The data come from the RNA Mapping Database (RMDB), library OK3TST.
Chemical mapping of a 207-nucleotide RNA with 2A3 and DMS.
The RNA was probed in 150 mM KOAc, 10 mM MgCl2 and 150 mM bicine (pH 8.5) at 24 C.
For 2A3 the reverse transcriptase was SuperScript II with manganese.
For DMS the reverse transcriptase was MarathonRT.
For DMS, 6,525 sequencing reads were counted.
RNA sequence: GGGAACGACUCGAGUAGAGUCGAAAAAUAUACGAUGACAAUAAGUAAUGCGAUAAAUAAUAGGAGAGUGAGUCCCAUAUUGAGAAGCAUAAGUCUACACAUACAAUUCUUGGGUCCGUAGGUCCUUCCACCUGAAAAUGGAGAUGGGCUGAUAUAAAAUGUAGCAAGAUUUCGAUCUUGCUACAUUAAAAGAAACAACAACAACAAC
Reactivity to 2A3 in 0.01 (KOAc 150mM, MgCl2 10mM, bicine 150mM(pH8.5), 24C), signal-to-noise 3, nucleotides 027 to 156: a010u150a010u040a050c030g050a040u070g050a020c040a070a080u120a130a030g100u080a100a040u070g010c020g020a030u050a120a130a010u080a020a040u060a100g030g000a020g000a010g060u030g010a010g060u010c010c000c010a010u020a030u050u100g040a050g020a070a000g040c030a030u030a100a030g050u010c060u070a030c030a000c010a050u150a070c040a040a140u070u030c020u050u050g040g000g000u010c020c010g020u030a010g000g030u000c010c000u010u000c020c010a150c020c020u090g060a120a010a010a050u150g010g000a040g000a020u020g000g000g000c010u010g020a000u010a000u020a120a170
Reactivity to DMS in 0.01 (KOAc 150mM, MgCl2 10mM, bicine 150mM(pH8.5), 24C), signal-to-noise 3, nucleotides 027 to 156: a130u000a080u000a090c030g030a170u010g030a110c060a090a070u010a060a150g020u000a110a120u000g010c010g010a120u000a060a080a100u000a060a120u000a080g020g000a060g020a040g020u010g020a100g010u010c010c010c020a080u020a100u000u000g010a090g000a110a090g010c060a090u000a020a120g010u000c020u000a070c060a030c050a090u000a070c060a070a120u000u000c040u000u020g010g020g010u000c030c030g020u000a150g020g010u000c000c000u000u000c020c020a070c010c020u000g010a060a070a100a120u000g020g020a060g010a080u000g030g000g010c000u000g000a100u000a080u020a080a070